[RMDB]
RNA sequence: GGGAACGACUCGAGUAGAGUCGAAAAGAUAUGGACGUGUACAGCUUUUGACGCCUGAAUGUCGGAAACGACAUAGUAGGGCGAUAAGCUGUCACGUCCUAAGUCAAAAGCAUCGUUCGCGAUGCAACUUGCCUUCAAAGUUCGCUUUGAAGGCAAGAAAAGAAACAACAACAACAAC
Reactivity to DMS in 0.01 (KOAc 150mM, MgCl2 10mM, bicine 150mM(pH8.5), 24C), signal-to-noise 4, nucleotides 027 to 126: g000a050u000a300u010g010g010a030c010g030u000g010u010a020c010a010g000c000u000u000u010u020g020a180c040g030c020c010u000g010a270a080u000g010u000c010g000g010a150a100a250c010g000a010c000a020u000a050g010u000a300g000g000g010c000g010a070u000a010a010g000c000u000g000u000c000a010c000g010u000c000c000u000a010a050g020u000c030a110a100a160a150g010c000a020u000c000g010u010u000c220g050c020g020a010u000g010c010a070a080
Reactivity to 2A3 in 0.01 (KOAc 150mM, MgCl2 10mM, bicine 150mM(pH8.5), 24C), signal-to-noise 5, nucleotides 027 to 126: g040a020u070a040u140g010g000a000c000g030u030g100u300a020c010a000g010c010u010u140u300u290g300a210c080g020c020c010u170g130a300a020u170g000u000c000g000g010a050a100a060c010g010a010c010a000u010a020g060u030a010g000g010g000c010g010a010u020a010a000g010c000u000g000u000c010a000c010g010u000c000c000u000a020a010g000u000c010a040a020a020a060g020c000a010u010c010g060u140u150c290g030c020g130a010u000g000c000a000a000